[RMDB]
RNA sequence: GGGAACGACUCGAGUAGAGUCGAAAAGUGCGAGGUCGUGUGUAGCUUACAAUCUUUGCGGUGUUAUUGCGGAAGAAUAUCGGUGUUGGACCAGUUUCCAUACGUAGGACAAAGAUACCUCGCUGAAGAUACUGAUUCAUUUCGAUGGAUCAGUAUCAAAAGAAACAACAACAACAAC
Reactivity to DMS in 0.01 (KOAc 150mM, MgCl2 10mM, bicine 150mM(pH8.5), 24C), signal-to-noise 9, nucleotides 027 to 126: g010u010g010c020g000a020g000g010u000c080g020u020g010u010g010u010a090g010c100u020u020a050c080a070a070u010c030u000u000u010g010c040g010g020u010g010u020u020a060u020u020g000c060g000g010a090a080g000a040a060u030a080u020c080g010g000u010g010u010u020g000g010a070c060c070a110g010u010u010u000c010c010a060u030a120c070g010u010a070g000g000a120c050a030a050a050g000a050u010a040c010c000u000c000g010c010u010g000a080a090
Reactivity to 2A3 in 0.01 (KOAc 150mM, MgCl2 10mM, bicine 150mM(pH8.5), 24C), signal-to-noise 9, nucleotides 027 to 126: g140u090g000c000g010a000g000g020u030c030g010u040g010u000g030u050a010g020c000u030u030a040c020a020a070u020c010u080u070u090g300c050g020g010u090g030u080u100a080u060u080g060c030g040g030a030a010g010a040a050u080a070u160c060g000g000u070g030u090u110g040g020a020c000c020a060g030u030u110u040c020c010a020u050a110c040g040u070a040g020g070a020c020a020a070a000g020a010u040a020c000c000u000c000g000c010u000g010a030a010